[RMDB]
RNA sequence: GGGAACGACUCGAGUAGAGUCGAAAAACUCGUAGGCUACGGCCUACGAGACGGGUUUACUCCUGGAUGUUACCGUUUCGUCCAGCCGGGGCCGGACGUCGUUUUGGUGUCUGAUUCGGUAACCGAAUCGGGAGCACCAUCUGCGUAGGCUUGUGGUUUAAGGCUUGCGCCACCUACGGUCUUGGAUAGCCCCCGCCAGGCAGGGACCCCAAUACCUGUGCAGCGGGCAGAACCCGCUGCACGAACGGCGGAGUACGCUCCGCCGAACAUAAUAAUUCGUUAUUAUGAAAAGAAACAACAACAACAAC
Reactivity to 2A3 in 0.01 (KOAc 150mM, MgCl2 10mM, bicine 150mM(pH8.5), 24C), signal-to-noise 2, nucleotides 027 to 266: a000c010u010c000g000u000a010g000g010c000u050a000c220g130g010c010c000u000a000c000g000a000g000a010c020g010g000g000u030u040u190a300c020u030c000c000u000g030g030a110u110g060u110u060a110c070c030g020u060u110u120c050g010u060c010c040a020g000c000c030g000g000g040g000c030c000g050g080a010c010g030u140c040g000u020u040u270u110g000g010u020g070u080c020u010g000a000u000u030c010g020g020u100a220a250c160c000g000a000a020u020c010g040g010g010a070g040c010a000c010c000a000u020c030u090g040c020g000u020a030g000g010c000u040u050g040u050g050g090u010u040u200a070a040g000g020c010u020u100g060c050g010c000c020a030c000c000u090a040c000g030g070u060c110u140u090g030g010a050u080a050g010c000c010c000c000c000g050c000c010a010g010g010c040a000g040g000g020a000c000c000c000c010a040a010u070a160c020c020u040g000u010g000c010a010g020c000g070g010g000c000a010g090a050a010c020c000c000g010c000u000g050c000a010c010g010a060a010c010g000g000c020g020g010a020g010u040a010c130g040c070u000c000c000g020c010c000g010a010a000
Reactivity to DMS in 0.01 (KOAc 150mM, MgCl2 10mM, bicine 150mM(pH8.5), 24C), signal-to-noise 2, nucleotides 027 to 266: a240c020u040c010g010u000a020g010g020c000u000a080c130g030g000c000c000u000a020c000g000a000g000a050c260g000g020g000u000u000u020a110c030u020c020c000u000g000g000a170u020g020u000u000a120c150c100g020u000u010u000c050g030u020c040c040a150g010c070c020g000g010g000g000c010c040g010g030a060c080g030u020c100g000u010u000u010u020g010g000u000g010u000c000u010g000a030u000u000c000g000g000u020a140a180c070c010g010a040a050u010c010g020g000g000a100g020c040a000c000c000a000u020c100u000g030c010g020u000a100g000g010c040u030u000g040u010g010g010u010u000u000a080a080g010g010c030u000u020g010c270g020c000c040a010c010c090u000a130c040g020g010u010c030u000u030g000g020a060u000a090g020c000c010c010c010c010g040c000c020a020g010g000c150a070g000g000g000a040c050c020c010c170a090a120u010a090c050c010u020g040u010g020c000a090g070c040g000g050g060c070a120g030a120a300c020c030c000g020c030u020g020c050a030c030g000a040a090c010g000g020c020g020g000a020g040u000a140c150g010c010u000c000c000g020c020c000g010a010a110
An RNA of 307 nucleotides, treated with 2A3 and DMS and read out base by base.
For 2A3 the reverse transcriptase was SuperScript II with manganese.
It was measured as part of the RMDB library POS240.
DMS adducts were read by reverse transcription with MarathonRT.
The 2A3 profile rests on 1,473 reads.